[RMDB]
Annotation: An RNA of 207 nucleotides, treated with 2A3 and DMS and read out base by base. For DMS, 1,845 sequencing reads were counted. Values cover nucleotides 27 to 156. High 2A3 reactivity points to a flexible backbone, as in loops and unpaired stretches. For 2A3, 880 sequencing reads were counted. The data come from the RNA Mapping Database (RMDB), library OK3TST. For DMS the reverse transcriptase was MarathonRT. 2A3 adducts were read by reverse transcription with SuperScript II with manganese.
RNA sequence: GGGAACGACUCGAGUAGAGUCGAAAAUCUUCUAUAGGGGUCUUGAACUUCGCUGUGCGUGCUCAUGGGCUGACUGCUGAUGAGAAGCCCCUCCCAAAGCGAGAGGUGAAAGAGAAGGACACGAGUGUGAAACCAAAGAGUGUAGAGGCUAAGAGAGGAUUAGGCAAUAGUUCGCUAUUGCCUAAUCAAAAGAAACAACAACAACAAC
Reactivity to 2A3 in 0.01 (KOAc 150mM, MgCl2 10mM, bicine 150mM(pH8.5), 24C), signal-to-noise 1, nucleotides 027 to 156: u020c010u120u020c030u060a140u120a150g000g000g000g050u000c000u050u030g070a050a020c020u050u040c020g000c050u030g080u040g080c010g080u040g020c000u050c130a150u100g000g000g000c010u020g060a060c030u110g020c030u120g100a070u070g050a040g000a040a010g030c000c000c000c000u000c000c010c000a050a120a000g100c100g020a110g000a020g030g010u040g050a100a040a020g040a000g000a080a000g000g020a000c010a010c160g010a000g010u060g030u040g050a030a000a000c010c010a000a000a060g050a010g020u040g000u030a020g000a010g000g000c030u030a040a010g000a000g010a000g080
Reactivity to DMS in 0.01 (KOAc 150mM, MgCl2 10mM, bicine 150mM(pH8.5), 24C), signal-to-noise 1, nucleotides 027 to 156: u010c000u000u000c010u010a210u010a090g030g030g030g040u010c050u010u000g000a130a080c060u000u010c040g040c060u010g000u000g020c050g000u000g270c010u000c030a030u000g010g000g030c000u000g040a120c140u040g000c050u000g010a100u010g010a110g000a110a270g050c040c010c010c010u000c020c000c000a120a090a160g010c080g010a050g030a080g000g000u000g000a120a090a030g010a080g010a040a180g000g020a130c020a100c030g010a050g050u000g000u000g010a050a060a040c020c010a040a100a070g010a050g020u040g010u000a080g010a040g020g000c010u000a070a090g010a160g000a230g010